[RMDB]
RNA sequence: GGGAACGACUCGAGUAGAGUCGAAAAUGCAUUAGCCGCCAAUCACUCCUGAGAUAUCAUCUGUUUUUUUGAACACUAAAGCGUUCCACUCGCCUUGAACCAUGUGCGUCUCAAGGAAGAAUCCUGCGCUAAAGGCAGCUUCCAGAACCAUAUCCAAUAGUCAUACUGAUUUCGAUCAGUAUGACUAAAAAGAAACAACAACAACAAC
Reactivity to DMS in 0.01 (KOAc 150mM, MgCl2 10mM, bicine 150mM(pH8.5), 24C), signal-to-noise 2, nucleotides 027 to 156: u010g070c040a120u000u010a080g020c010c030g050c010c300a090a150u000c040a090c020u000c040c030u000g020a160g000a080u010a120u010c070a020u010c030u000g010u010u000u050u010u000u020u040g010a050a100c040a090c050u000a070a060a090g000c030g010u000u010c010c020a120c060u010c080g020c000c020u000u000g010a020a120c080c030a200u000g000u000g010c130g010u000c040u000c010a050a040g020g010a080a080g010a070a070u000c030c010u000g000c060g050c020u000a040a050a130g030g020c030a070g000c020u000u000c010c010a110g000a090a030c050c030a050u010a150u000c040c000a080a300
Reactivity to 2A3 in 0.01 (KOAc 150mM, MgCl2 10mM, bicine 150mM(pH8.5), 24C), signal-to-noise 4, nucleotides 027 to 156: u070g000c030a030u050u040a030g030c050c010g010c020c030a060a040u080c020a030c040u000c000c010u040g010a030g020a060u090a050u080c020a040u030c070u050g120u040u030u000u010u050u100u110g090a120a000c030a010c060u100a150a030a080g020c060g030u050u110c030c010a040c030u080c040g050c000c010u010u050g010a030a030c020c000a060u120g050u060g110c070g020u000c010u000c080a010a020g000g020a020a010g030a030a040u050c010c030u070g000c000g000c060u050a080a020a040g080g000c000a000g020c040u020u020c010c020a020g040a100a070c030c030a050u140a070u300c120c010a040a070